[RMDB]
RNA sequence: GGGAACGACUCGAGUAGAGUCGAAAAAAGACCGAGAGGUUCAAGCUUAUAGGGCAGAAAGCGGGGGACAGCAGUACUAAACAUUCCCUGUGGCUGAGACGAAGGAAGUACUCCAACAGCGUCUCAAAAAAGCAGCAGUCCUUCGGGACUGCUGCAACGGUAUGACUAAGUUCGCUUAGUCAUACCGAAAAGAAACAACAACAACAAC
Reactivity to 2A3 in 0.01 (KOAc 150mM, MgCl2 10mM, bicine 150mM(pH8.5), 24C), signal-to-noise 1, nucleotides 027 to 156: a000a000g020a020c050c020g010a020g010a010g180g030u130u120c050a000a010g000c000u030u050a020u110a230g000g000g120c080a060g140a070a090a070g020c030g000g000g000g010g000a010c010a000g040c010a010g100u020a050c050u110a070a120a020c060a020u020u030c000c000c000u020g050u070g070g000c060u050g000a000g000a040c010g000a030a050g000g010a070a040g040u100a170c010u040c080c000a070a060c020a060g080c000g020u000c010u010c010a090a080a000a000a000a000g000c000a000g000c000a000g010u040c000c000u040u030c060g020g020g000a000c000u010g000c000u000g000c000a000a000
This 207-nucleotide RNA was probed chemically with 2A3.
For 2A3 the reverse transcriptase was SuperScript II with manganese.
For 2A3, 568 sequencing reads were counted.